[RMDB]
RNA sequence: GGGAACGACUCGAGUAGAGUCGAAAACGCGUCCUGUUCGCAGGACGCGAAUUAAGGAAACCUUCCUGGUGGCGACAAUAAAUGAGCACUCGCGCUCAUAAAAUAGGUGGGCGUUCGCGCCCACCAAAGUACCGUUAGGAUUCGUCCUAACGGUACUAAAAGAAACAACAACAACAAC
Reactivity to 2A3 in 0.01 (KOAc 150mM, MgCl2 10mM, bicine 150mM(pH8.5), 24C), signal-to-noise 2, nucleotides 027 to 126: c000g000c010g000u000c000c010u000g020u010u030c230g050c030a000g020g070a000c010g000c010g010a000a000u100u020a110a010g040g040a080a060a060c010c000u040u060c000c000u060g060g020u050g030g040c050g080a050c070a100a030u130a240a150a010u110g010a000g010c010a020c080u220c120g090c020g000c010u000c010a020u110a040a120a000a030u160a060g000g010u010g010g020g020c030g050u040u010c130g000c000g000c090c000c020a000c000c000a000a020
Reactivity to DMS in 0.01 (KOAc 150mM, MgCl2 10mM, bicine 150mM(pH8.5), 24C), signal-to-noise 2, nucleotides 027 to 126: c000g010c020g000u000c000c010u000g020u000u010c210g030c000a030g000g000a050c010g040c010g000a000a030u000u000a060a080g000g020a060a140a100c060c040u000u000c000c000u000g000g010u000g000g010c080g000a080c170a070a050u000a050a130a040u000g000a010g020c000a110c250u000c210g010c130g000c000u010c000a020u000a060a060a050a130u000a030g000g010u000g000g010g030c000g040u000u000c200g010c010g000c010c000c010a000c010c000a000a040